RNA sequence: GGGAACGACUCGAGUAGAGUCGAAAAGCGUUACCGCGGGGGAUUGUUCAAACGAGUGGUUCCAUCAAUUUGGACGUCGAUCAGCGAGCUGAUGGCAAGCCGACUAUCGCGAUGAUCUAUCAGGAUCACCGUAGGUAAUAUUCGUAUUACCUACGGUAAAAGAAACAACAACAACAAC
Reactivity to DMS in 0.01 (KOAc 150mM, MgCl2 10mM, bicine 150mM(pH8.5), 24C), signal-to-noise 9, nucleotides 027 to 126: g010c040g010u010u020a070c070c030g020c020g000g010g010g000g000a080u010u020g000u000u000c080a050a090a120c110g010a080g010u000g010g010u010u010c020c010a110u030c150a080a120u020u020u010g010g000a060c040g010u010c030g000a080u000c090a070g000c030g000a120g010c040u000g000a090u020g000g010c100a090a100g010c030c010g000a090c060u010a070u010c020g010c050g010a090u010g000a030u000c010u010a100u020c190a090g010g000a050u010c040
Reactivity to 2A3 in 0.01 (KOAc 150mM, MgCl2 10mM, bicine 150mM(pH8.5), 24C), signal-to-noise 9, nucleotides 027 to 126: g020c020g090u120u100a090c050c010g000c020g020g010g000g010g030a070u060u160g060u100u090c050a070a070a050c030g000a020g020u060g030g030u080u010c020c010a040u100c040a070a160u080u070u120g060g020a020c020g020u100c020g040a080u030c050a010g020c010g070a040g010c030u050g030a100u080g100g030c080a060a020g020c010c000g070a110c020u060a050u090c030g010c040g080a070u060g000a010u000c010u030a160u170c090a080g140g010a010u030c020